[RMDB]
RNA sequence: GGGAACGACUCGAGUAGAGUCGAAAAGGUUCAUGGUUCGCCAUGAACCAAAAGUACAGCUAUGAGUACAAGUGUCAUAGCAAAAGAUCGAAAGAUCAAAUAAAAGUAGCUCCUUCGGGAGCUACAAGUUCUUUAGGAAGUUCGCUUCCUAAAGAACAAAAGAAACAACAACAACAAC
Reactivity to 2A3 in 0.01 (KOAc 150mM, MgCl2 10mM, bicine 150mM(pH8.5), 24C), signal-to-noise 2, nucleotides 027 to 126: g000g000u000u000c000a000u010g010g020u040u070c150g010c040c010a010u000g000a020a000c000c000a000a010a000a000g010u000a000c000a010g030c010u010a010u010g000a000g010u030a020c160a300a000g080u090g010u280c000a000u000a000g000c010a010a030a010a110g000a000u010c010g020a050a030a000g000a000u030c050a020a080a020u160a020a060a000a020g000u000a000g010c000u020c020c000u030u060c200g040g000g010a000g000c000u000a000c000a000a000
Reactivity to DMS in 0.01 (KOAc 150mM, MgCl2 10mM, bicine 150mM(pH8.5), 24C), signal-to-noise 2, nucleotides 027 to 126: g000g010u000u010c000a000u000g000g000u000u000c170g080c010c000a020u000g000a000a000c010c010a000a030a040a220g000u000a010c000a170g010c010u000a010u000g020a020g000u020a010c030a140a240g020u020g010u000c000a000u000a000g010c010a110a080a090a110g000a000u020c000g000a140a060a130g000a000u000c000a090a060a090u000a070a090a120a140g010u000a010g000c000u000c000c000u000u000c230g000g000g010a000g010c000u010a000c000a020a060
Structure probing data (2A3 and DMS) for a 177-nucleotide construct. Values cover nucleotides 27 to 126. Conditions: 150 mM KOAc, 10 mM MgCl2 and 150 mM bicine (pH 8.5), 24 C. DMS adducts were read by reverse transcription with MarathonRT. For 2A3 the reverse transcriptase was SuperScript II with manganese.